[RMDB]
RNA sequence: GGGAACGACUCGAGUAGAGUCGAAAAGUUCGGGUGGAAGCACGGGUGAGAACUCGUGUGGACCGUUCAGUAACGAAAAUCCUGGUCAUAGUAGCAGCGUUAGUCGGGUUAGACCCCCGACGGCCGACGAAAGAUACUUGUUCGCAAGUAUCUUUCGAAAAGAAACAACAACAACAAC
Reactivity to 2A3 in 0.01 (KOAc 150mM, MgCl2 10mM, bicine 150mM(pH8.5), 24C), signal-to-noise 7, nucleotides 027 to 126: g020u010u020c010g010g020g040u260g050g020a020a010g010c000a000c000g000g010g010u030g040a100g020a040a010c000u000c000g000u010g010u010g010g060a010c000c010g000u020u020c030a030g050u100a060a040c070g040a070a050a000a060u050c000c010u030g030g040u070c060a070u030a150g080u100a020g070c100a000g020c070g120u070u130a050g000u030c010g000g010g000u020u020a040g050a060c020c020c010c000c000g000a000c000g000g010c020c030g040a050
Reactivity to DMS in 0.01 (KOAc 150mM, MgCl2 10mM, bicine 150mM(pH8.5), 24C), signal-to-noise 7, nucleotides 027 to 126: g000u000u000c020g000g000g010u010g000g030a170a270g010c000a010c010g000g000g020u000g000a250g010a140a020c000u000c000g000u000g000u010g000g000a230c020c010g010u000u000c020a070g020u020a040a040c050g010a090a080a100a120u010c010c010u010g000g000u000c050a070u010a080g010u010a080g000c070a070g020c110g010u020u010a090g020u000c000g010g000g000u000u010a150g000a200c230c230c000c000c000g010a020c010g000g010c020c020g010a190
An RNA of 177 nucleotides, treated with 2A3 and DMS and read out base by base. For 2A3 the reverse transcriptase was SuperScript II with manganese. 2A3 is a SHAPE reagent: it acylates the 2'-hydroxyl of flexible nucleotides of all four kinds. It was measured as part of the RMDB libraries RFM100 and RFMREP. For DMS the reverse transcriptase was MarathonRT. The RNA was probed in 150 mM KOAc, 10 mM MgCl2 and 150 mM bicine (pH 8.5) at 24 C.